Structure probing data (DMS and 2A3) for a 207-nucleotide construct. For 2A3, 4,514 sequencing reads were counted. Values are in units of 0.01, from 0 to 300, in steps of 10.
RNA sequence: GGGAACGACUCGAGUAGAGUCGAAAACUUCCUUCGGGAAGAUAAGAUCCUAAGUCGAAUCCAAUGACGCCACACACUUCAACAGCUGUCGGAAACGACAGACAUGAAGUGGUGGUAAGACAGGAUUCGAUAUGGAGUAACGUCCAUUCGUGGACAACACUGUGUUCGAUUUCGAUCGAACACAGUGAAAAGAAACAACAACAACAAC
Reactivity to DMS in 0.01 (KOAc 150mM, MgCl2 10mM, bicine 150mM(pH8.5), 24C), signal-to-noise 1, nucleotides 027 to 156: c000u020u000c000c010u010u030c300g020g040g010a080a000g000a240u000a070a160g000a050u000c000c000u000a110a290g030u000c020g020a050a000u020c000c020a220a240u000g040a150c140g000c000c010a000c030a100c010a020c020u000u000c000a040a060c130a180g060c010u000g000u000c000g030g000a160a090a290c010g000a010c010a000g000a000c070a300u000g000a030a010g000u000g010g050u000g010g040u000a010a060g000a300c030a070g000g020a050u000u000c020g000a000u000a160u000g010g020a090g060u000a090a150c120g040u000c000c000a070u020u010c160g040u010g000g000a000c000a110a240
Reactivity to 2A3 in 0.01 (KOAc 150mM, MgCl2 10mM, bicine 150mM(pH8.5), 24C), signal-to-noise 4, nucleotides 027 to 156: c010u000u010c010c000u040u070c300g100g000g010a020a000g000a080u150a120a100g110a100u030c000c000u020a090a030g020u010c000g000a000a000u000c000c030a100a300u110g020a070c090g000c010c000a040c010a020c000a000c020u020u000c010a110a110c000a210g060c000u010g000u000c000g060g050a130a040a020c010g000a000c000a000g020a020c030a080u060g000a010a000g000u000g020g000u000g000g000u000a000a020g040a010c030a020g000g020a000u010u000c000g000a000u010a030u090g010g010a030g050u110a130a070c090g020u000c010c010a020u060u110c300g150u060g000g010a010c010a050a010